The data come from the RNA Mapping Database (RMDB), library OK1LIB. Structure probing data (DMS and 2A3) for a 177-nucleotide construct. The 2A3 profile rests on 163,315 reads. The DMS profile rests on 130,594 reads. The reactions ran in a buffer of 150 mM KOAc, 10 mM MgCl2 and 150 mM bicine (pH 8.5), at 24 C. Values cover nucleotides 27 to 126.

RNA sequence: GGGAACGACUCGAGUAGAGUCGAAAACAAGCGCGGCAGGUGCUCCGUAGGUCAAAAGCUGGGUCGCAAGCUGUAUGCGCACAUGCGAUGCGCGUCUCCGGUGCGGACAGACUCUGGCAACCUGGCCUCUACGCAGCCGGUUCGCUGGUUGUGUAGAAAAAGAAACAACAACAACAAC
Reactivity to DMS in 0.01 (KOAc 150mM, MgCl2 10mM, bicine 150mM(pH8.5), 24C), signal-to-noise 9, nucleotides 027 to 126: c090a100a090g010c080g010c050g010g010c030a070g000g020u010g010c030u000c100c050g010u010a050g010g010u010c070a060a060a090a130g000c010u000g010g010g020u000c020g010c030a070a080g000c030u000g000u030a030u010g010c010g000c010a020c030a150u030g020c210g010a090u010g010c030g000c040g000u010c030u010c090c020g000g020u010g010c060g000g000a040c050a040g000a070c040u010c080u010g010g000c020a050a060c080c020u010g000g000c020c040
Reactivity to 2A3 in 0.01 (KOAc 150mM, MgCl2 10mM, bicine 150mM(pH8.5), 24C), signal-to-noise 9, nucleotides 027 to 126: c050a030a040g060c030g000c020g080g000c030a040g030g060u050g040c020u020c020c020g070u070a040g010g050u060c030a030a040a020a030g000c010u020g010g010g050u020c010g000c030a020a020g020c010u030g050u090a050u090g070c020g080c010a010c010a050u220g100c090g170a180u050g010c030g000c010g040u010c030u010c030c020g040g040u050g010c020g010g010a010c010a030g030a040c010u020c030u100g040g000c010a020a030c000c000u010g050g010c000c000